[RMDB]
RNA sequence: GGGAACGACUCGAGUAGAGUCGAAAAGCGUACUACAUCUCCGAGUGGGAGAGGUGGGUCUCUAGCGUGUUUGCUCCCAAAUAGGAGCAAAUCGGGCCCACUACCCACCUCCCACGAGGAGAUGUAUCGCAAACAUAUGCUCUUCGGAGCAUAUGAAGAGUUAACAACUGUUCGCAGUUGUUAACUCAAAAGAAACAACAACAACAAC
Reactivity to 2A3 in 0.01 (KOAc 150mM, MgCl2 10mM, bicine 150mM(pH8.5), 24C), signal-to-noise 3, nucleotides 027 to 156: g000c010g020u090a080c030u010a000c030a010u020c020u010c000c020g010a030g010u000g000g000g000a020g000a010g040g000u030g000g020g010u040c080u020c080u140a140g090c090g100u240g040u070u010u000g000c000u060c010c000c020a170a300a020u300a140g000g000a000g000c000a010a000a010u040c010g000g010g000c010c010c010a000c000u030a030c010c010c010a060c010c000u000c000c000c010a000c000g000a000g000g000a000g000a000u000g000u000a000u010c000g000c000a010a010a000c000a000u010a000u000g000c000u000c000u040u090c240g090g000a000g000c000a000u000a000u010g000a040a030
Reactivity to DMS in 0.01 (KOAc 150mM, MgCl2 10mM, bicine 150mM(pH8.5), 24C), signal-to-noise 1, nucleotides 027 to 156: g020c010g030u000a000c080u000a020c020a000u000c010u010c020c000g000a300g030u000g040g010g020a010g040a130g030g100u050g000g060g010u000c010u000c060u000a140g000c100g000u020g050u000u000u060g010c010u010c020c000c010a040a250a110u000a060g010g000a040g000c010a000a000a000u010c040g040g010g000c000c060c010a000c010u000a000c050c010c050a300c140c000u020c050c000c070a000c040g000a300g000g010a010g000a000u010g000u000a010u010c020g010c070a050a090a220c010a010u000a020u000g000c000u000c000u000u020c230g040g020a030g010c000a000u000a010u000g000a050a060